RNA sequence: GGGAACGACUCGAGUAGAGUCGAAAAACGCUGGGUAAGGACUAUGACCGAGAGAUAGGGACUAUCCAUCUGAAGCGCGCACGGAUGGACGAAUCCCUAUGGAAUGGUCACGAAUCCUUACCUGUGCUGAAGCGCGCACGGCAACCGAAAGGUGCGAGGAAUCGGUAAACUUCGGUUUACCGAUUCCAAAAGAAACAACAACAACAAC
Reactivity to 2A3 in 0.01 (KOAc 150mM, MgCl2 10mM, bicine 150mM(pH8.5), 24C), signal-to-noise 2, nucleotides 027 to 156: a000c050g010c000u030g000g000g030u000a000a000g030g010a020c100u140a090u180g040a000c010c040g100a060g030a020g010a200u000a000g010g000g000a000c040u070a020u040c000c000a000u000c000u010g030a290a090g010c020g000c000g010c020a000c000g000g000a000u000g000g000a000c010g090a110a300u000c010c000c000u000a000u000g000g030a130a230u300g000g000u000c000a000c040g080a040a290u030c010c000u000u000a000c000c010u000g000u000g010c010u030g020a090a050g000c000g030c000g050c020a000c000g050g050c060a150a080c040c000g020a060a030a000g000g000u030g010c040g050a070
Structure probing data (2A3) for a 207-nucleotide construct. Values cover nucleotides 27 to 156.